The record gives the reactivity of an RNA of 177 nucleotides to 2A3 and DMS. Reactivities are rounded to 0.1 and cut off at 0 and 3. Source: RMDB library M2PK50, as collected in RNAgym. For DMS the reverse transcriptase was MarathonRT. The RNA was probed in 150 mM KOAc, 10 mM MgCl2 and 150 mM bicine (pH 8.5) at 24 C.

[RMDB]
RNA sequence: GGGAACGACUCGAGUAGAGUCGAAAAUGGCCAUGCUUCGGCAUGGCCACUUGCGUAGCUCGCAAAUUAUUUUAGCUACGCUUAAUAAAAAUUUGCGAUAUAAGUUGGGGUUGUUCGCAACCCCAAACACUAGUAUUAGUUUCGACUAAUACUAGUGAAAAGAAACAACAACAACAAC
Reactivity to 2A3 in 0.01 (KOAc 150mM, MgCl2 10mM, bicine 150mM(pH8.5), 24C), signal-to-noise 5, nucleotides 027 to 126: u050g010g010c010c000a000u010g000c020u070u090c210g080g000c000a010u000g020g020c000c000a010c010u030u060g010c000g000u000a000g010c020u030c060g020c030a010a030a050u210u150a140u050u280u060u170a010g000c000u010a000c010g000c000u000u090a110a070u080a020a080a000a020a030u030u040u040g010c010g000a010u010a000u030a220a070g110u060u030g000g020g010g000u000u000g010u010u050c170g020c070a010a010c000c000c000c000a000a000a000
Reactivity to DMS in 0.01 (KOAc 150mM, MgCl2 10mM, bicine 150mM(pH8.5), 24C), signal-to-noise 4, nucleotides 027 to 126: u000g010g010c000c000a010u000g010c000u000u010c220g010g010c010a010u000g000g020c010c000a000c010u000u000g000c000g010u000a020g000c020u010c050g000c010a010a010a100u010u010a100u010u010u010u010a060g010c000u000a010c010g000c010u000u000a030a070u000a020a070a030a030a060u000u000u000g000c000g000a120u000a060u000a080a100g000u000u000g010g000g000g010u000u000g010u000u010c190g010c020a020a030c000c000c000c000a000a010a100